Conditions: 150 mM KOAc, 10 mM MgCl2 and 150 mM bicine (pH 8.5), 24 C. An RNA of 177 nucleotides, treated with DMS and 2A3 and read out base by base. For 2A3 the reverse transcriptase was SuperScript II with manganese. Values cover nucleotides 27 to 126. For DMS, 973 sequencing reads were counted. Source: RMDB library M2PK50, as collected in RNAgym.
RNA sequence: GGGAACGACUCGAGUAGAGUCGAAAAGUGCAGCAGUUCGCUGCUGCACAAAAGGCAUCGUAUCAUUGCUUCGAAGCCAAACUACAAACUAGAAAGCAGUGAAAAGACACUUCUUCGGAAGUGUCAACAUUGCCCGUUAGUUCGCUAACGGGCAAUGAAAAGAAACAACAACAACAAC
Reactivity to DMS in 0.01 (KOAc 150mM, MgCl2 10mM, bicine 150mM(pH8.5), 24C), signal-to-noise 1, nucleotides 027 to 126: g010u000g010c000a000g010c000a010g020u000u000c180g100c020u010g000c000u000g000c000a000c000a030a000a160a100g000g020c020a070u000c060g040u000a020u010c000a020u010u000g000c010u000u000c010g000a070a100g030c060c020a090a080a140c080u020a090c160a090a050a170c240u020a100g000a030a040a060g030c000a000g020u000g000a170a090a100a160g000a000c000a000c000u000u020c000u000u000c200g000g000a010a000g010u010g010u010c000a060a050
Reactivity to 2A3 in 0.01 (KOAc 150mM, MgCl2 10mM, bicine 150mM(pH8.5), 24C), signal-to-noise 2, nucleotides 027 to 126: g010u000g000c000a000g010c010a010g010u020u110c160g040c110u000g010c010u000g000c000a000c010a000a110a000a020g000g000c000a020u000c020g020u050a010u160c010a020u000u030g000c020u040u040c010g000a050a010g010c030c000a080a040a010c060u170a040c060a080a160a040c020u070a080g180a110a060a000g040c010a000g010u010g000a020a070a040a060g000a000c000a000c000u010u010c000u020u050c150g080g000a000a000g010u000g000u000c000a000a000